[RMDB]
RNA sequence: GGGAACGACUCGAGUAGAGUCGAAAAAAAGAUAUGGACCAUGCGCAGAGGCGGUUACUAAGACAGAGGUUUCGGAAACGAAACCUUCGAGUAACCGAACUACCUUGAGGCAUGGUCCUAAGUCAAAGAUAGGGGAUGAGUUCGCUCAUCCCCUAUCAAAAGAAACAACAACAACAAC
Reactivity to DMS in 0.01 (KOAc 150mM, MgCl2 10mM, bicine 150mM(pH8.5), 24C), signal-to-noise 3, nucleotides 027 to 126: a110a110a090g020a010u010a030u000g010g000a040c010c000a010u000g010c030g040c130a300g000a070g050g000c010g010g000u000u000a000c010u010a240a120g020a010c300a080g000a010g010g010u000u010u000c010g010g000a010a010a040c000g020a010a010a010c000c000u000u000c000g000a010g010u000a000a010c000c000g000a040a020c040u010a300c030c000u000u000g000a170g020g000c000a000u000g000g010u000c000c000u000a000a070g000u000c000a050a110a100